[RMDB]
RNA sequence: GGGAACGACUCGAGUAGAGUCGAAAACGAAGCAAUGGCGAAGUCCUAGGCACCACAUCUCCGGGCGUUGUCGAAGCAAUGGCACAGUCCUAGGCAUCGUUCCUCUAUCCGAUGUUGAAGCAAUGGCCAGUUAAGCACUGUUCGCAGUGCUUAACUGAAAAGAAACAACAACAACAAC
Reactivity to DMS in 0.01 (KOAc 150mM, MgCl2 10mM, bicine 150mM(pH8.5), 24C), signal-to-noise 2, nucleotides 027 to 126: c110g000a090a060g000c130a080a070u010g000g010c070g030a100a050g010u000c010c010u040a040g000g000c080a080c010c060a030c170a110u000c020u010c060c050g000g010g000c020g010u000u000g010u000c060g000a070a110g010c100a050a050u010g050g000c040a100c140a070g000u000c030c010u000a170g000g000c000a110u000c020g010u000u020c020c030u010c150u010a050u010c060c030g000a070u000g000u000u000g010a050a220g040c060a050a060u010g010g010c120
Reactivity to 2A3 in 0.01 (KOAc 150mM, MgCl2 10mM, bicine 150mM(pH8.5), 24C), signal-to-noise 1, nucleotides 027 to 126: c070g080a090a030g000c060a130a290u220g070g020c050g070a010a000g040u040c020c030u000a080g000g040c030a000c020c010a090c010a060u090c050u040c060c050g030g000g060c030g080u090u060g030u080c030g040a080a000g030c010a050a080u200g030g000c010a010c030a110g020u120c010c000u020a050g000g000c000a010u020c010g000u000u050c020c000u040c040u070a150u060c030c020g030a040u100g050u040u110g010a030a000g040c000a040a060u090g000g000c000